[RMDB]
RNA sequence: GGGAACGACUCGAGUAGAGUCGAAAAUCAUCGUUCUUCGGAACGAUGAAGUAUAACGCGCGCUCCGGACACAGGCGUAGCUGGCCUGGGAUAGUCACAGUAUGGGGCAAACUUUCGAGUUUGCCAACUUGAGACUCUUCUUCGGAAGAGUCUCAAGAAAAGAAACAACAACAACAAC
Reactivity to DMS in 0.01 (KOAc 150mM, MgCl2 10mM, bicine 150mM(pH8.5), 24C), signal-to-noise 1, nucleotides 027 to 126: u000c000a010u000c020g030u010u000c000u000u010c270g030g010a020a000c000g000a000u010g000a000a070g030u010a080u010a090a110c100g010c070g000c060g020c000u010c030c040g040g050a090c080a090c080a060g000g000c040g020u000a070g020c110u000g000g000c040c020u010g000g010g000a070u000a040g010u000c030a050c100a030g030u010a110u000g020g010g010g010c000a000a000a000c000u000u000u020c170g000a010g000u010u000u000g010c000c000a050a090